An RNA of 177 nucleotides, treated with DMS and 2A3 and read out base by base. For DMS, 14,395 sequencing reads were counted. For DMS the reverse transcriptase was MarathonRT. Values cover nucleotides 27 to 126. DMS (dimethyl sulfate) methylates the pairing face of unpaired adenines and cytosines.
RNA sequence: GGGAACGACUCGAGUAGAGUCGAAAACAGAUCAAAUCACCUGGCAUGAUCUGGGACAGCGACAUCUUGGGGACAGAGAUGGGCCAGGAAGGAGGGGGCAGAGAGCUAGAGAUGGAGACCCACCACGUAGAUAAGCAAAGUUCGCUUUGCUUAUCUAAAAAGAAACAACAACAACAAC
Reactivity to DMS in 0.01 (KOAc 150mM, MgCl2 10mM, bicine 150mM(pH8.5), 24C), signal-to-noise 9, nucleotides 027 to 126: c040a030g000a040u010c030a040a060a130u010c090a120c050c030u000g000g020c080a240u000g010a030u000c010u000g000g000g010a110c110a080g010c060g010a070c070a050u000c040u000u010g010g010g010g010a090c090a100g000a080g010a060u000g010g010g020c030c020a040g000g010a120a060g010g010a090g010g010g010g000g010c070a050g000a060g010a070g000c050u000a060g010a090g000a070u000g000g010a110g010a130c020c010c020a110c080c090a070c220g010
Reactivity to 2A3 in 0.01 (KOAc 150mM, MgCl2 10mM, bicine 150mM(pH8.5), 24C), signal-to-noise 5, nucleotides 027 to 126: c010a000g020a040u020c030a020a060a100u120c040a080c070c040u030g040g000c040a060u070g010a030u030c030u020g000g010g050a030c040a060g060c030g080a020c010a070u030c030u070u110g040g000g030g030a020c050a060g090a020g030a070u060g000g050g010c030c010a020g030g010a010a030g040g030a040g010g010g010g010g000c040a010g050a000g000a000g060c030u070a020g010a010g000a080u050g010g000a030g010a020c020c000c000a010c020c000a040c030g060